[RMDB]
RNA sequence: GGGAACGACUCGAGUAGAGUCGAAAAGAUUAUGUGGGAGAUGCGCCCGGUCGUGUCACUGGAAACAGAAUUGCGAGUCGCUCGCUCUAGCGAUAUUGAUGUGUACAGUAGCGUACACUGUGCUACUUUAAGGUAUUAUGACGAUACCACGUCAAAACAUCAGUAGCCGCUUCGGCGGCUACUGAUGAAAAGAAACAACAACAACAAC
Reactivity to 2A3 in 0.01 (KOAc 150mM, MgCl2 10mM, bicine 150mM(pH8.5), 24C), signal-to-noise 1, nucleotides 027 to 156: g020a060u130u220a080u240g020u050g020g040g000a060g080a020u040g110c010g000c020c070c000g070g060u180c080g000u040g120u080c000a000c010u000g040g070a070a110a020c070a050g040a020a160u250u180g020c070g000a010g140u110c040g010c010u000c000g030c070u090c070u070a060g000c020g040a050u010a080u090u280g060a110u010g030u000g000u000a010c000a060g020u050a000g090c040g070u020a050c040a080c040u150g000u080g060c020u020a060c000u000u080u100a100a080g010g000u010a020u050u000a040u120g070a040c040g040a000u040a050c000c010a000c010g000u040c000a120a000a000a000